[RMDB]
RNA sequence: GGGAACGACUCGAGUAGAGUCGAAAACUGCCGCCGGGACGCAGUGAUCCUCGCAGGGUCGCACGGUCGCCUCGGGUCGGCCUCGUGUCGGCUCGACCUGCGUGGGGAGCGAGUGGCGAGCCCGACCAAAACUUUCUCGCCUUCGGGCGAGAAAGAAUCAAUAAAAUGAGUUCGCUCAUUUUAUUGAAAAAGAAACAACAACAACAAC
Reactivity to 2A3 in 0.01 (KOAc 150mM, MgCl2 10mM, bicine 150mM(pH8.5), 24C), signal-to-noise 4, nucleotides 027 to 156: c020u030g000c010c010g010c020c010g030g040g100a060c030g010c020a120g200u010g010a000u000c000c000u000c010g000c020a030g000g030g060u170c050g020c060a090c110g040g010u060c020g030c020c020u020c010g000g000g000u030c010g000g010c010c010u110c120g280u300g010u020c000g000g000c010u020c010g040a100c010c000u020g000c000g000u020g000g020g000g000a020g000c000g010a090g090u100g020g010c000g010a060g000c030c050c010g010a010c010c000a040a070a000a040c010u000u000u010c000u010c000g000c010c020u020u080c170g080g000g000c010g000a000g000a000a000a000g000a000a020
Reactivity to DMS in 0.01 (KOAc 150mM, MgCl2 10mM, bicine 150mM(pH8.5), 24C), signal-to-noise 1, nucleotides 027 to 156: c050u000g000c000c020g040c020c030g030g000g000a180c010g010c030a230g020u000g000a040u000c000c010u000c110g030c050a120g020g020g000u000c050g040c020a060c040g010g020u000c010g020c030c020u010c030g000g000g000u000c010g040g000c010c000u000c170g010u010g030u000c030g010g000c020u010c020g020a100c000c000u000g000c060g000u000g010g000g030g000a100g010c020g010a160g000u000g020g020c000g000a160g010c010c020c020g000a060c040c030a030a090a220a150c000u000u000u000c010u000c000g000c010c000u000u000c300g040g030g030c000g000a000g000a010a000a020g000a040a140
This 207-nucleotide RNA was probed chemically with 2A3 and DMS. Conditions: 150 mM KOAc, 10 mM MgCl2 and 150 mM bicine (pH 8.5), 24 C. The data come from the RNA Mapping Database (RMDB), library M2RFPK. Values cover nucleotides 27 to 156.